Notes:
Chemical mapping of a 177-nucleotide RNA with 2A3 and DMS.

RNA sequence: GGGAACGACUCGAGUAGAGUCGAAAAUUUUUUUAGACAGGGUUUACCUCAAUCUCGCAGGCUGGAAUGCUGUGGUGGGAUCAUAGCUCACUGGAGCCUUGAACCUUUGGGUUCAAGUAGCUGGGGGGGUCAUAAUCUUAUUCGUAAGAUUAUGACCAAAAGAAACAACAACAACAAC
Reactivity to 2A3 in 0.01 (KOAc 150mM, MgCl2 10mM, bicine 150mM(pH8.5), 24C), signal-to-noise 2, nucleotides 027 to 126: u050u010u030u010u000u020u120a060g040a020c030a020g020g000g040u150u170u100a070c010c040u020c010a040a030u040c010u030c090g010c030a050g020g030c000u030g030g120a150a030u090g000c020u050g080u060g300g000u040g000g050g000a010u050c030a100u120a020g000c010u000c010a030c070u040g070g040a010g000c000c020u000u020g000a020a010c000c030u050u090u230g230g000g000u010u000c000a000a020g000u020a020g000c020u010g000g000g010g000g030
Reactivity to DMS in 0.01 (KOAc 150mM, MgCl2 10mM, bicine 150mM(pH8.5), 24C), signal-to-noise 4, nucleotides 027 to 126: u000u000u000u010u010u010u010a110g010a130c110a080g010g000g010u000u010u010a080c050c010u000c080a080a090u010c040u000c050g020c090a120g000g000c030u000g010g020a100a090u010g000c040u000g010u010g010g010u000g010g000g000a060u000c110a070u000a100g020c030u000c040a060c100u010g010g010a040g020c060c000u000u010g000a010a000c000c000u010u000u020g020g020g020u000u000c000a000a010g010u000a030g010c050u000g000g000g020g000g010
The RNA was probed in 150 mM KOAc, 10 mM MgCl2 and 150 mM bicine (pH 8.5) at 24 C.